[RMDB]
RNA sequence: GGGAACGACUCGAGUAGAGUCGAAAACAGCAUAUACGCGGUGAAUUAUUCGGUGUCAUAGGAGUAGAGUCUUUUGGUAAGAUGCUGAUAAUGAGUAGGGGAGAUGAAAGUUAAUCGUUCCCUGUCUACGUAAGUAUUUCUUCGGAAAUACUUACGUAAAAGAAACAACAACAACAAC
Reactivity to 2A3 in 0.01 (KOAc 150mM, MgCl2 10mM, bicine 150mM(pH8.5), 24C), signal-to-noise 6, nucleotides 027 to 126: c010a010g030c040a020u110a020u060a150c070g030c030g060g030u060g080a090a070u130u060a060u090u150c030g030g010u020g030u040c030a040u060a090g020g030a030g040u080a040g040a020g110u050c030u020u110u050u070g040g010u020a060a050g020a060u040g000c000u010g020a030u040a140a060u090g050a020g030u070a030g000g010g020g010a040g010a010u070g060a110a040a030g040u100u150a070a030u040c000g020u000u000c000c000c000u000g030u000c020u000
Reactivity to DMS in 0.01 (KOAc 150mM, MgCl2 10mM, bicine 150mM(pH8.5), 24C), signal-to-noise 6, nucleotides 027 to 126: c060a140g020c050a070u000a080u010a090c110g010c070g010g030u010g020a090a070u000u010a070u010u000c050g020g010u000g010u010c040a080u010a080g000g010a070g020u000a090g010a130g000u000c030u000u000u010u010g020g010u010a050a080g000a040u000g000c030u000g000a070u000a060a060u000g010a070g020u000a100g000g000g000g000a100g010a060u000g010a060a090a090g010u010u010a080a120u010c030g000u010u000c000c000c010u000g010u000c100u000

The record gives the reactivity of an RNA of 177 nucleotides to 2A3 and DMS. Conditions: 150 mM KOAc, 10 mM MgCl2 and 150 mM bicine (pH 8.5), 24 C. For 2A3 the reverse transcriptase was SuperScript II with manganese. The 2A3 profile rests on 8,726 reads.